[RMDB]
RNA sequence: GGGAACGACUCGAGUAGAGUCGAAAAUUGGCGAAUGCCUGUAGAUCUACAUUUGUUGCGGGUUCGAGACCCGUCAGAGCCCGGCUCUGUAGCUCAAUGGUAGAGCGGUGUAUUCACAUAAACUUGUAAAAGACACGUGCCUUCGGGCACGUGUCAACACAGAUCAAGUGUUCGCACUUGAUCUGUGAAAAGAAACAACAACAACAAC
Reactivity to DMS in 0.01 (KOAc 150mM, MgCl2 10mM, bicine 150mM(pH8.5), 24C), signal-to-noise 1, nucleotides 027 to 156: u000u010g030g020c050g000a020a000u010g040c000c030u000g000u000a110g010a130u010c000u000a010c040a080u000u000u010g020u000u000g030c050g010g000g050u010u010c070g000a300g000a120c030c010c020g010u000c030a090g000a090g010c000c100c040g030g030c010u000c050u010g000u010a050g000c030u040c030a070a140u010g010g020u000a070g000a060g050c030g020g030u010g010u000a040u010u010c100a010c030a080u000a090a110a110c090u000u010g020u000a090a070a090a180g000a120c000a000c010g020u000g040c000c000u000u000c290g000g010g040c000a000c040g010u000g020u000c010a000a010
Reactivity to 2A3 in 0.01 (KOAc 150mM, MgCl2 10mM, bicine 150mM(pH8.5), 24C), signal-to-noise 2, nucleotides 027 to 156: u080u000g030g000c020g040a200a030u160g030c010c000u050g040u040a060g000a090u000c010u040a010c000a000u030u020u260g050u060u080g020c010g000g000g010u020u070c020g020a030g060a090c000c000c020g000u000c010a000g000a000g010c050c260c230g100g000c020u020c000u000g060u050a030g020c000u000c060a040a030u140g180g010u120a020g000a000g050c030g030g010u010g000u000a080u000u120c000a000c020a050u150a080a160a070c060u100u030g110u230a040a090a000a100g020a000c020a000c000g000u000g010c000c030u040u090c250g020g000g040c000a000c000g000u000g000u000c000a000a000